[RMDB]
RNA sequence: GGGAACGACUCGAGUAGAGUCGAAAACAAGUUUAGGAACCCCACGGUGGCACCCACGCACGAUGUGACCACCGACCGCAGCCAGCGGCUGACGCUGCGCUUCGUGCCCGUGGACCGCGAGGACAACACCUACUCGUACAAAGUGCGCUACACGCUGAUGCAUUAGUGCAUUCGUGCACUAAUGCAUAAAAGAAACAACAACAACAAC
Reactivity to DMS in 0.01 (KOAc 150mM, MgCl2 10mM, bicine 150mM(pH8.5), 24C), signal-to-noise 1, nucleotides 027 to 156: c090a140a040g020u010u020u000a180g020g010a120a100c060c010c010c020a150c090g030g060u000g010g030c010a050c120c020c040a040c010g030c010a090c120g000a190u020g040u010g020a170c060c020a020c000c000g090a020c040c020g090c010a070g020c150c120a070g050c050g050g020c090u000g050a150c060g020c020u000g020c000g040c040u000u100c020g010u030g000c000c050c020g020u000g070g000a160c040c020g070c070g010a050g030g000a290c010a020a100c070a110c000c010u010a120c030u000c020g000u000a060c030a060a060a090g040u000g010c050g000c050u000a050c020a040c020g040c030u010g020
Reactivity to 2A3 in 0.01 (KOAc 150mM, MgCl2 10mM, bicine 150mM(pH8.5), 24C), signal-to-noise 2, nucleotides 027 to 156: c040a050a140g050u150u170u170a120g020g000a070a030c000c000c000c030a020c020g010g020u020g020g000c020a030c030c000c020a020c050g070c040a030c040g090a100u070g070u040g020a200c000c010a000c000c010g000a010c020c000g010c000a010g060c030c000a020g000c000g020g010c020u050g050a050c030g000c040u030g000c030g000c040u010u040c030g040u050g070c000c040c020g040u050g040g010a030c030c040g050c020g020a030g020g030a030c050a160a040c000a180c000c000u050a040c000u020c000g000u030a050c060a040a090a010g000u000g010c040g000c070u100a060c100a020c080g030c110u060g030
An RNA of 207 nucleotides, treated with DMS and 2A3 and read out base by base. Values cover nucleotides 27 to 156. The 2A3 profile rests on 1,100 reads. Values are in units of 0.01, from 0 to 300, in steps of 10. The RNA was probed in 150 mM KOAc, 10 mM MgCl2 and 150 mM bicine (pH 8.5) at 24 C. 2A3 adducts were read by reverse transcription with SuperScript II with manganese.